[RMDB]
An RNA of 177 nucleotides, treated with 2A3 and read out base by base. It was measured as part of the RMDB library OK1LIB. For 2A3, 640 sequencing reads were counted.

RNA sequence: GGGAACGACUCGAGUAGAGUCGAAAAUCCGUCCGAAACGCCUCCAUUGCCGGAGCAGAGCACCUUUGGUGCCCGAGGAGCAAUCGGUGCGGUUUCUCGAUCAAUCGAAAUGCUGAAAUCACAAUCCCGCUCAGGGAGUCUUCGGACUCCCUGAGCGAAAAGAAACAACAACAACAAC
Reactivity to 2A3 in 0.01 (KOAc 150mM, MgCl2 10mM, bicine 150mM(pH8.5), 24C), signal-to-noise 2, nucleotides 027 to 126: u010c000c000g000u000c000c000g030a030a140a010c060g120c180c010u040c000c070a220u080u210g030c030c040g040g040a080g010c070a000g080a060g030c050a050c030c000u280u170u300g000g000u010g020c020c000c000g040a150g000g020a020g020c000a040a040u000c010g090g000u300g000c000g050g000u020u000u020c040u000c010g040a090u040c000a180a050u020c100g160a050a110a130u100g060c100u050g030a010a080a220u190c020a070c070a120a040u090c000c000